Conditions: 150 mM KOAc, 10 mM MgCl2 and 150 mM bicine (pH 8.5), 24 C. An RNA of 177 nucleotides, treated with 2A3 and DMS and read out base by base.
[RMDB]
RNA sequence: GGGAACGACUCGAGUAGAGUCGAAAAGAUAUGGAGCGUUUCCAUGGAGCUGUGGGUCGGAAACGACCCAAACAGCUAUGAAGUGGGCGCUCCUAAGUCAAAAGGUGAUGUGUUCGCACAUCACCAACUAAAUACAUAGCUUCGGCUAUGUAUUUAGAAAAGAAACAACAACAACAAC
Reactivity to 2A3 in 0.01 (KOAc 150mM, MgCl2 10mM, bicine 150mM(pH8.5), 24C), signal-to-noise 2, nucleotides 027 to 126: g010a000u030a010u110g000g000a010g020c010g010u050u300u070c010c010a010u020g080g060a200g020c000u020g020u020g010g010g000u000c000g000g020a030a010a010c000g000a000c010c020c000a040a020a000c020a000g000c010u050a300u300g060a040a000g020u000g000g010g000c000g000c020u000c000c000u000a000a000g000u000c010a050a040a130a150g020g010u000g010a000u000g030u010g060u090u130c300g030c150a000c000a000u000c010a000c010c000a000a000
Reactivity to DMS in 0.01 (KOAc 150mM, MgCl2 10mM, bicine 150mM(pH8.5), 24C), signal-to-noise 4, nucleotides 027 to 126: g010a020u000a140u020g000g000a010g000c000g000u000u010u000c010c000a020u000g010g010a060g040c000u000g040u000g000g010g020u000c000g030g000a030a020a060c000g010a010c010c000c000a000a050a110c010a020g030c000u000a160u010g010a160a280g000u000g010g000g000c010g000c000u000c000c000u000a000a060g000u010c020a120a090a140a130g000g020u000g000a000u000g020u000g010u000u020c300g010c010a020c000a010u000c000a000c000c000a020a070

It was measured as part of the RMDB library TTRDES. For 2A3, 6,192 sequencing reads were counted.